[RMDB]
RNA sequence: GGGAACGACUCGAGUAGAGUCGAAAAGAUAUGGACUAGGCUGGAACUACCAGACGUUUCGGAAACGAAACGUUCUGGCCAAGGCCUAGUCCUAAGUCAAACGCUCACUCGUUCGCGAGUGAGCGAAGAAAUAUCCUGACUUCGGUCAGGAUAUUUCAAAAGAAACAACAACAACAAC
Reactivity to 2A3 in 0.01 (KOAc 150mM, MgCl2 10mM, bicine 150mM(pH8.5), 24C), signal-to-noise 1, nucleotides 027 to 126: g020a000u000a030u080g010g000a000c010u010a000g030g020c010u050g040g040a210a110c190u180a190c300c010a000g010a000c010g000u010u000u010c020g000g020a040a020a010c010g000a000a000a010c010g030u090u000c010u000g020g050c000c030a010a010g000g000c020c000u000a000g000u000c000c000u010a000a000g000u000c010a000a000a100c020g020c000u000c000a000c000u000c020g050u120u080c300g010c000g140a020g000u010g000a010g010c000g000a020a010
Reactivity to DMS in 0.01 (KOAc 150mM, MgCl2 10mM, bicine 150mM(pH8.5), 24C), signal-to-noise 2, nucleotides 027 to 126: g010a020u010a210u000g000g000a010c000u010a000g000g030c010u010g020g000a140a170c220u000a160c010c000a000g000a020c000g000u000u000u000c000g000g000a090a060a090c000g000a000a010a000c000g000u020u010c010u020g000g040c030c060a150a270g000g000c000c000u000a000g000u000c000c000u000a000a070g040u000c020a160a080a300c000g000c020u000c000a000c000u000c000g010u010u020c220g020c010g000a020g000u020g010a000g000c010g000a010a060
This 177-nucleotide RNA was probed chemically with 2A3 and DMS. The data come from the RNA Mapping Database (RMDB), library TTRDEL. The RNA was probed in 150 mM KOAc, 10 mM MgCl2 and 150 mM bicine (pH 8.5) at 24 C. The DMS profile rests on 1,497 reads. For 2A3 the reverse transcriptase was SuperScript II with manganese.